This 207-nucleotide RNA was probed chemically with 2A3 and DMS. DMS adducts were read by reverse transcription with MarathonRT. The reactions ran in a buffer of 150 mM KOAc, 10 mM MgCl2 and 150 mM bicine (pH 8.5), at 24 C.
RNA sequence: GGGAACGACUCGAGUAGAGUCGAAAAUUAAUGAAGCAAAUCUCCAAACGCCAACGAUGAGCGUUUCGCAAUCGUCGCUUAAGGCUUUUGCCGAGGCUGCUUGAGCCUUGUUACCAAAGAAAAGCCGAAAACCCAAAUGUCUUCGGACAUUUGGGAACUUACUACCUAGCUUCGGCUAGGUAGUAAGAAAAGAAACAACAACAACAAC
Reactivity to 2A3 in 0.01 (KOAc 150mM, MgCl2 10mM, bicine 150mM(pH8.5), 24C), signal-to-noise 2, nucleotides 027 to 156: u160u070a050a040u160g060a040a050g000c110a120a060a150u110c070u020c050c060a050a040a030c010g080c040c000a070a030c060g050a010u030g020a030g070c040g010u130u150u210c060g010c020a020a060u030c020g070u030c010g020c090u100u130a090a030g000g000c000u030u030u010u060g060c030c020g020a000g000g010c000u060g050c060u050u180g100a010g000c000c000u000u000g060u100u130a040c020c020a110a000a000g040a020a090a050a000g050c010c000g030a020a070a070a060c010c000c000a000a000a000u000g000u000c000u020u030c150g080g000a000c000a000u000u030u000g000g020g000a000a000
Reactivity to DMS in 0.01 (KOAc 150mM, MgCl2 10mM, bicine 150mM(pH8.5), 24C), signal-to-noise 1, nucleotides 027 to 156: u030u020a030a130u050g000a140a090g000c010a110a130a080u000c030u060c000c010a130a110a130c160g020c020c020a040a070c040g000a030u000g000a090g060c000g000u000u000u000c130g070c100a030a040u000c020g000u000c040g000c040u000u000a030a070g010g010c000u000u000u000u000g030c100c000g000a170g050g010c070u010g020c160u000u000g010a100g010c060c060u020u010g020u020u000a220c080c070a060a120a280g000a060a060a080a100g020c060c010g000a080a000a030a110c020c010c010a030a030a000u000g020u000c000u000u030c300g040g040a010c000a010u000u000u000g000g040g010a000a010